About this RNA:
Structure probing data (DMS and 2A3) for a 177-nucleotide construct. In probing experiments dimethyl sulfate is read out at A N1 and C N3, which are open when not base-paired. Source: RMDB libraries RFM100 and RFMREP, as collected in RNAgym. The RNA was probed in 150 mM KOAc, 10 mM MgCl2 and 150 mM bicine (pH 8.5) at 24 C.
RNA sequence: GGGAACGACUCGAGUAGAGUCGAAAAGCUUAUAGCUUGGCAAUCUCAUGUCAAAUAAGGAAAAGAAGAGGAACCCAAGGUAUGUUUCUCAUCUACCUUCUUUGACAUGGGACUGCCUAAGCUAAAAGUAUACGAGUUACUUCGGUAACUCGUAUACAAAAGAAACAACAACAACAAC
Reactivity to DMS in 0.01 (KOAc 150mM, MgCl2 10mM, bicine 150mM(pH8.5), 24C), signal-to-noise 3, nucleotides 027 to 126: g010c080u000u010a140u020a030g000c000u000u010g000g000c000a010a030u000c000u000c000a000u000g000u000c000a000a000a000u000a020a010g000g000a080a050a060a020g000a020a080g020a000g000g000a010a020c000c190c200a160a170g020g020u050a130u030g000u000u000u000c000u000c000a070u010c000u010a080c000c010u000u000c040u000u000u010g000a000c000a000u000g030g000g000a000c050u010g000c010c000u010a000a000g000c000u000a000a050a080a060
Reactivity to 2A3 in 0.01 (KOAc 150mM, MgCl2 10mM, bicine 150mM(pH8.5), 24C), signal-to-noise 9, nucleotides 027 to 126: g030c030u110u060a040u050a170g000c000u000u010g000g000c000a010a010u000c010u000c000a000u000g000u000c000a000a000a000u010a000a000g020g030a090a140a050a050g010a050a010g010a010g010g010a000a010c020c040c110a100a100g200g040u300a160u270g010u010u000u000c000u000c000a040u000c000u030a090c000c000u000u000c010u010u000u000g000a000c000a000u000g000g000g000a000c000u000g000c000c000u000a000a000g000c000u010a000a020a000a040